[RMDB]
Chemical mapping of a 177-nucleotide RNA with 2A3 and DMS. Conditions: 150 mM KOAc, 10 mM MgCl2 and 150 mM bicine (pH 8.5), 24 C. For 2A3, 3,981 sequencing reads were counted.

RNA sequence: GGGAACGACUCGAGUAGAGUCGAAAAACUUUGGCCGACGCUGCUAGGCGGGUGCGCACUGGUGUCUGGCCCGGCGCCGCGCUAGGGCGCACGUUUCGCUCUGCGGAGGGUAACCGGGCUGAAAUAAUCAACGAAUUAUGUUCGCAUAAUUCGUUGAAAAAGAAACAACAACAACAAC
Reactivity to 2A3 in 0.01 (KOAc 150mM, MgCl2 10mM, bicine 150mM(pH8.5), 24C), signal-to-noise 2, nucleotides 027 to 126: a000c040u080u070u090g030g000c020c000g020a030c030g010c040u060g010c020u040a060g020g050c000g020g040g000u040g000c010g020c010a030c040u010g000g040u070g040u070c170u170g030g000c020c000c000g280g000c100g010c000c000g000c000g010c040u070a000g010g000g000c010g020c010a020c020g020u030u110u090c010g000c010u000c020u040g010c020g030g010a090g050g040g000u010a060a040c020c040g030g010g010c010u010g040a040a060a060u200a020a100
Reactivity to DMS in 0.01 (KOAc 150mM, MgCl2 10mM, bicine 150mM(pH8.5), 24C), signal-to-noise 4, nucleotides 027 to 126: a080c080u000u010u000g010g000c020c010g020a110c060g010c020u000g010c070u010a100g010g020c010g010g010g020u000g000c020g000c030a050c030u000g000g010u000g010u010c070u010g030g000c010c010c080g010g010c170g010c010c000g000c020g000c010u000a020g000g000g010c000g020c030a020c070g020u000u010u010c010g010c000u010c040u000g020c040g000g010a110g010g000g020u010a070a100c050c080g010g010g000c020u000g000a030a040a070u010a090a170